[RMDB]
RNA sequence: GGGAACGACUCGAGUAGAGUCGAAAAACUCUGGAAUAGGAAGAAGGAAGGUGGAAAGAAAGGAGGGACCCUCCCGAUCCGAGGGGCCCAACCACCAAGUUUGGAGAGCACUCCGGGCCGAAUGGUCAGCGAAAGGGGUUCGCCCCUUUCAAAAGAAACAACAACAACAAC
Reactivity to DMS in 0.01 (KOAc 150mM, MgCl2 10mM, bicine 150mM(pH8.5), 24C), signal-to-noise 9, nucleotides 027 to 129: a030c050u000c040u000g030g000a080a080u020a120g000g000a090a040g040a020a010g000g000a040a060g000g040u040g000g000a060a050a050g000a090a070a070g000g020a150g000g010g030a050c030c020c000u020c020c080c110g020a090u030c180c220g000a040g020g010g020g040c020c030c060a040a050c040c060a090c100c060a090a100g000u020u040u000g000g000a060g000a090g000c140a080c010u020c040c000g010g000g000c090c050g000a060a040u040g000g000u010c070a070g030c200
Reactivity to 2A3 in 0.01 (KOAc 150mM, MgCl2 10mM, bicine 150mM(pH8.5), 24C), signal-to-noise 6, nucleotides 027 to 129: a000c020u010c040u060g020g030a030a030u030a080g030g000a010a000g000a000a000g030g020a010a020g030g040u030g030g030a060a070a030g080a040a070a020g020g030a030g010g010g010a010c000c010c000u020c000c020c020g050a040u040c050c030g010a020g000g010g010g000c000c010c000a010a030c010c020a040c020c020a050a010g010u030u030u040g040g010a050g010a010g010c040a050c090u000c010c000g010g000g000c020c010g040a050a050u110g030g010u030c040a020g040c030
This 170-nucleotide RNA was probed chemically with DMS and 2A3. The DMS profile rests on 42,104 reads. The reactions ran in a buffer of 150 mM KOAc, 10 mM MgCl2 and 150 mM bicine (pH 8.5), at 24 C. For DMS the reverse transcriptase was MarathonRT. For 2A3, 23,423 sequencing reads were counted.